[RMDB]
RNA sequence: GGGAACGACUCGAGUAGAGUCGAAAAAGACGGAAACCCAUCGACAGUCACCAGAUGCUGCAUCACCUGAUCACUGAUGGCUCAACGGUAUCCGGCGGUACAACUGAAUACUUGUAGCUGCCUUUUGAAAAGGAGUUCAUCUUCGGAUGAACUCCAACAAGCUAAGUGAGUUCGCUCACUUAGCUUGAAAAGAAACAACAACAACAAC
Reactivity to DMS in 0.01 (KOAc 150mM, MgCl2 10mM, bicine 150mM(pH8.5), 24C), signal-to-noise 2, nucleotides 027 to 156: a020g020a090c060g020g000a050a080a150c070c000c040a150u000c050g030a190c030a100g030u000c040a090c010c020a020g010a050u000g010c030u010g050c070a120u000c060a010c010c010u010g010a090u000c130a090c160u000g030a120u000g020g050c040u000c020a050a130c030g010g000u000a020u010c010c000g020g020c010g030g020u000a060c090a100a110c020u010g010a080a060u000a040c050u010u000g010u000a080g000c010u000g000c000c130u010u010u000u020g000a070a090a110a160g030g010a040g000u000u010c010a010u000c000u000u000c280g030g000a020u010g000a010a000c000u000c000c000a000a010
Reactivity to 2A3 in 0.01 (KOAc 150mM, MgCl2 10mM, bicine 150mM(pH8.5), 24C), signal-to-noise 5, nucleotides 027 to 156: a000g050a000c070g020g030a070a020a020c020c010c010a060u080c040g040a050c020a030g020u060c030a020c020c010a010g030a110u100g030c060u060g000c040a040u040c010a080c020c040u100g060a130u100c020a000c050u020g010a010u030g060g000c010u010c040a070a090c070g020g010u060a080u070c050c040g010g000c010g000g010u030a010c010a040a020c050u170g110a160a080u130a150c100u050u040g020u010a060g090c010u010g030c010c020u100u140u070u100g100a100a110a020a040g000g000a000g010u000u000c000a000u020c000u070u110c150g000g000a000u000g000a000a000c000u000c000c000a000a000

The record gives the reactivity of an RNA of 207 nucleotides to DMS and 2A3. Reactivities are given for positions 27 through 156. For 2A3, 3,000 sequencing reads were counted. The RNA was probed in 150 mM KOAc, 10 mM MgCl2 and 150 mM bicine (pH 8.5) at 24 C. For 2A3 the reverse transcriptase was SuperScript II with manganese.